[RMDB]
RNA sequence: GGGAACGACUCGAGUAGAGUCGAAAAGCUCUGUAAUGAGAUGGGAUCCGAAGCCCCAUUGAGGGAUAAUACAGGCUCUCCCAUCCAACUCCUAUUCCAACACGUCCUCGUCGUACAGAGUGGUAACUAAGGUAUAGCUCCUUCGGGAGCUAUACAACUCCUAGGUAACGUUCGCGUUACCUAGGAGAAAAGAAACAACAACAACAAC
Reactivity to DMS in 0.01 (KOAc 150mM, MgCl2 10mM, bicine 150mM(pH8.5), 24C), signal-to-noise 1, nucleotides 027 to 156: g000c010u020c010u010g030u000a030a080u010g010a110g040a050u000g040g040g000a110u000c000c050g010a250a270g000c040c000c000c060a300u000u000g020a140g020g000g010a030u000a090a100u000a180c090a300g040g000c030u000c090u000c010c000c000a090u000c040c000a090a120c070u020c000c020u000a080u000u010c060c030a150a100c050a090c050g000u000c020c020u000c020g040u010c000g000u000a060c020a030g000a090g020u000g030g000u000a070a080c030u030a100a150g000g040u000a000u000a040g000c010u000c000c000u000u000c290g080g040g000a020g000c000u000a000u000a040c010a030a070
Reactivity to 2A3 in 0.01 (KOAc 150mM, MgCl2 10mM, bicine 150mM(pH8.5), 24C), signal-to-noise 2, nucleotides 027 to 156: g010c000u010c030u000g020u020a120a120u120g050a000g000a130u040g000g000g000a030u240c000c000g040a070a000g020c000c020c010c010a120u140u250g090a300g010g000g000a050u040a270a060u140a200c140a050g000g000c000u000c000u010c040c000c000a010u000c000c000a000a000c010u090c040c020u120a210u100u110c050c000a060a060c030a050c150g120u070c070c000u060c030g070u030c030g000u080a000c000a000g030a000g000u090g040g000u080a080a090c170u100a200a000g090g010u000a000u000a000g000c000u000c000c000u010u070c070g060g000g000a000g000c000u000a000u010a000c000a000a000

Structure probing data (DMS and 2A3) for a 207-nucleotide construct. The data come from the RNA Mapping Database (RMDB), library M2RFPK. The DMS profile rests on 1,510 reads. Values are in units of 0.01, from 0 to 300, in steps of 10.